[RMDB]
RNA sequence: GGGAACGACUCGAGUAGAGUCGAAAAAUGUCUCUAGACGUGCUUUAGGGAAAUAUGAUAUAGAUCGCGAUCCAUCUCGUCAUCCUGAUUUUCCUCAAAGUCAUGGCCAACAGCAAUAUGCUUGGGCAAAUUCCGUUGAUUUCGAUCAACGGAAUUUAAAAGAAACAACAACAACAAC
Reactivity to 2A3 in 0.01 (KOAc 150mM, MgCl2 10mM, bicine 150mM(pH8.5), 24C), signal-to-noise 2, nucleotides 027 to 126: a000u030g030u000c010u000c000u030a090g020a110c060g080u050g020c010u110u020u030a040g020g000g000a000a070a000u160a060u100g120a030u040a000u020a240g070a040u080c070g000c000g070a040u080c110c030a090u070c030u030c040g020u000c010a060u060c000c010u060g060a080u050u020u000u000c030c020u060c070a070a040a010g030u070c010a060u050g090g000c000c000a060a100c030a070g000c000a020a100u140a040u290g030c020u020u050g030g010g010c020
Reactivity to DMS in 0.01 (KOAc 150mM, MgCl2 10mM, bicine 150mM(pH8.5), 24C), signal-to-noise 4, nucleotides 027 to 126: a100u020g010u000c000u000c020u010a120g010a160c080g020u000g010c080u000u000u000a030g000g000g000a020a040a040u000a060u000g000a100u000a080u010a080g010a050u010c150g010c060g010a030u010c090c140a060u010c110u000c050g010u010c200a040u000c060c080u000g000a090u010u000u000u000c000c000u000c120a020a040a040g020u010c050a040u000g020g000c030c020a060a140c170a030g000c020a070a110u000a110u010g010c040u010u000g000g000g020c050